[RMDB]
RNA sequence: GGGAACGACUCGAGUAGAGUCGAAAACCUCCUUUCGAGGAGGAGGCGCCGUAGGCAGGCAAAAUCUCAUCGAUCGACGUAACAUCAUCCAUUCGAAAGAGUGGAUGUGGUCGGGAGAGAUAGCCUGCCUAAACGGAAACAGGGUGUUCGCACCCAAUUACAGCUACCCAUUCGUGGGUAGCUGUAAAAAAGAAACAACAACAACAAC
Reactivity to DMS in 0.01 (KOAc 150mM, MgCl2 10mM, bicine 150mM(pH8.5), 24C), signal-to-noise 1, nucleotides 027 to 156: c010c000u010c000c000u010u000u000c030g020a240g050g020a010g000g010a020g000g010c070g010c000c040g060u000a000g000g000c000a030g020g040c010a100a070a100a160u010c030u000c000a220u010c050g010a080u010c010g010a120c020g020u010a130a180c140a060u000c060a000u000c010c000a010u000u000c010g060a190a180a190g000a060g040u000g000g010a030u010g010u000g010g040u000c020g000g030g000a080g040a000g020a010u000a300g000c020c000u000g000c010c000u000a000a010a050c030g010g020a300a080a170c120a090g040g000g000u000g000u000u000c020g110c010a060c000c010c000a000a010
Reactivity to 2A3 in 0.01 (KOAc 150mM, MgCl2 10mM, bicine 150mM(pH8.5), 24C), signal-to-noise 2, nucleotides 027 to 156: c000c000u000c010c030u110u080u090c300g110a120g030g010a000g000g020a000g090g190c100g000c000c000g000u000a000g000g000c000a050g030g010c080a000a000a130a040u050c080u070c070a280u240c010g030a020u010c000g060a030c030g060u150a180a060c030a200u180c000a000u010c020c000a000u010u000c000g010a090a080a040g000a040g040u000g000g000a000u000g000u000g040g000u000c000g000g000g000a120g000a000g000a010u080a020g000c010c000u010g000c000c000u000a010a010a010c000g000g130a030a090a070c100a140g000g010g000u030g000u060u130c160g120c070a000c000c010c000a000a000